[RMDB]
RNA sequence: GGGAACGACUCGAGUAGAGUCGAAAAGUCCAAAAUUGAUUCGGCGGCCCUGUCAUGAGGCCGAAACGAAGGCACGUACCCCUUCGAAUGGCGUCGGGGAGUCAGCGGCUAUAUAUGCUCCUAAUGCUAAAGUCGUGCUGGUUCGCCAGCACGACAACUAAUACAGUAUCUUCGGAUACUGUAUUAGAAAAGAAACAACAACAACAAC
Reactivity to DMS in 0.01 (KOAc 150mM, MgCl2 10mM, bicine 150mM(pH8.5), 24C), signal-to-noise 1, nucleotides 027 to 156: g010u000c020c040a120a140a100a140u000u010g000a290u000u000c030g020g020c010g010g030c030c010c010u010g020u010c200a100u000g020a090g010g010c000c000g000a010a040a070c040g000a070a040g000g030c020a140c090g000u000a150c000c030c000c010u010u010c010g010a050a130u000g010g020c050g010u000c060g000g020g020g030a060g000u000c030a050g010c080g010g050c020u030a080u010a150u000a050u000g020c000u000c030c030u000a060a120u000g000c040u000a050a090a110g000u020c000g030u020g000c010u000g010g000u010u010c300g000c000c020a030g000c010a000c000g030a000c010a000a060
Reactivity to 2A3 in 0.01 (KOAc 150mM, MgCl2 10mM, bicine 150mM(pH8.5), 24C), signal-to-noise 3, nucleotides 027 to 156: g050u050c020c010a000a050a000a070u120u190g060a060u090u060c020g090g000c000g010g030c090c000c000u030g090u100c120a160u140g030a050g090g000c010c010g000a000a000a000c000g000a000a000g020g000c060a010c200g180u170a080c030c000c010c000u000u020c000g080a100a100u110g050g020c020g030u020c020g030g000g000g010a030g090u060c050a030g020c020g060g000c030u000a000u000a010u010a010u210g020c000u020c020c010u070a140a050u140g020c060u100a190a070a030g010u010c000g010u000g000c000u000g000g050u020u040c200g040c060c000a000g000c000a000c000g010a000c000a000a000